[RMDB]
RNA sequence: GGGAACGACUCGAGUAGAGUCGAAAAUUUGCAGUAUGCGAAACUUGCGAUUGAUGAGACGGAAUAUGUGAGACUUACAUACAGGUCGCCAGUUGACGUGGCACAUUAUCUUACCAAGAAGUCUUGGCGAAUCAAAGCGGUUCGCCGCUUUGAUUCGAAAAGAAACAACAACAACAAC
Reactivity to 2A3 in 0.01 (KOAc 150mM, MgCl2 10mM, bicine 150mM(pH8.5), 24C), signal-to-noise 2, nucleotides 027 to 126: u040u000u110g000c020a110g090u210a090u230g050c000g010a020a040a040c000u020u050g000c040g030a040u030u100g070a090u080g050a070g080a100c070g020g180a100a080u090a070u220g090u040g070a060g050a110c070u070u090a030c050a030u100a040c000a030g040g000u000c010g000c010c000a020g030u050u030g100a090c040g040u070g000g050c030a000c000a020u040u170a090u090c070u050u090a080c030c040a020a050g130a140a050g070u000c000u020u000g030g030
Reactivity to DMS in 0.01 (KOAc 150mM, MgCl2 10mM, bicine 150mM(pH8.5), 24C), signal-to-noise 2, nucleotides 027 to 126: u000u020u010g040c000a100g040u000a050u010g030c030g020a160a050a060c070u000u000g010c000g010a020u010u010g010a140u010g010a100g030a080c080g020g010a100a160u000a110u010g020u010g000a100g010a100c120u010u000a080c100a060u000a090c120a130g030g010u010c020g040c020c020a060g020u000u000g010a080c100g010u010g010g000c010a040c090a030u010u000a060u010c110u000u000a180c050c040a060a100g000a140a080g020u000c020u000u010g020g020